[RMDB]
RNA sequence: GGGAACGACUCGAGUAGAGUCGAAAAAGACAUACGUUCGCGUAUGUCUGACCGGCACCUGACCCUAAGGAAAUGCUCUAUGACAGGACACACUGAUUGUGAUACCUCGAGAUUUCGAUCUCGAGAAUCAUAACCAAGGCUUCGGCCUUGGUUAUGAAAAAGAAACAACAACAACAAC
Reactivity to DMS in 0.01 (KOAc 150mM, MgCl2 10mM, bicine 150mM(pH8.5), 24C), signal-to-noise 3, nucleotides 027 to 126: a020g000a000c000a010u000a020c000g020u000u010c230g040c000g010u000a000u000g000u010c000u000g000a100c060c020g000g020c050a070c030c020u010g000a150c040c020c020u000a110a070g000g000a060a070a060u010g010c050u010c050u000a050u000g020a120c100a080g010g020a080c050a040c050a060c070u000g000a160u010u000g000u000g000a120u020a070c210c000u000c000g000a020g010a020u000u000u010c170g000a020u000c000u000c000g010a010g010a070a050
Reactivity to 2A3 in 0.01 (KOAc 150mM, MgCl2 10mM, bicine 150mM(pH8.5), 24C), signal-to-noise 1, nucleotides 027 to 126: a000g000a010c000a000u000a000c010g030u030u030c250g000c000g080u010a000u000g000u000c010u000g000a040c000c000g000g060c040a050c010c000u040g080a090c000c010c000u040a060a060g080g000a090a060a040u060g040c020u000c000u050a200u100g060a060c020a040g020g030a030c010a000c000a010c040u080g110a250u090u090g010u000g060a050u050a190c010c000u000c010g000a000g010a000u080u090u160c220g030a000u020c000u000c000g010a020g000a000a030